[RMDB]
Description:
Chemical mapping of a 177-nucleotide RNA with 2A3 and DMS. The RNA was probed in 150 mM KOAc, 10 mM MgCl2 and 150 mM bicine (pH 8.5) at 24 C. For 2A3 the reverse transcriptase was SuperScript II with manganese. Source: RMDB library TTRDES, as collected in RNAgym. For DMS the reverse transcriptase was MarathonRT.
RNA sequence: GGGAACGACUCGAGUAGAGUCGAAAAGAUAUGGAUGUCGGGUAUGAGCAUCGAUCUUUCUCGGAAACGAGAAAGGGAGCUCACCCACAUCCUAAGUCAAACGUCACUGUCUUCGGACAGUGACGAAUCUUGAGGGAAAGUUCGCUUUCCCUCAAGAAAAAGAAACAACAACAACAAC
Reactivity to 2A3 in 0.01 (KOAc 150mM, MgCl2 10mM, bicine 150mM(pH8.5), 24C), signal-to-noise 2, nucleotides 027 to 126: g030a030u070a030u110g000g000a010u010g020u100c300g040g020g010u210a290u300g070a020g000c020a130u300c020g040a040u000c000u000u000u000c020u020c010g020g030a070a100a020c000g000a000g030a000a000a010g000g000g000a010g000c000u020c040a020c000c000c000a000c000a020u030c010c000u000a050a010g050u010c070a150a050a060c010g010u020c000a010c000u010g040u030c000u070u120c280g070g000a000c000a010g030u000g020a000c020g010a010a060
Reactivity to DMS in 0.01 (KOAc 150mM, MgCl2 10mM, bicine 150mM(pH8.5), 24C), signal-to-noise 2, nucleotides 027 to 126: g020a030u010a300u010g010g000a010u000g000u010c240g040g000g000u030a100u020g030a000g050c000a300u010c180g000a040u010c000u000u000u000c000u000c000g000g000a140a100a150c000g020a020g000a000a000a000g030g010g000a030g000c000u000c000a060c000c000c000a040c000a000u000c010c000u010a010a030g020u000c050a120a100a300c020g010u000c000a010c000u010g000u000c000u000u020c230g000g000a020c020a000g020u000g010a010c010g010a020a010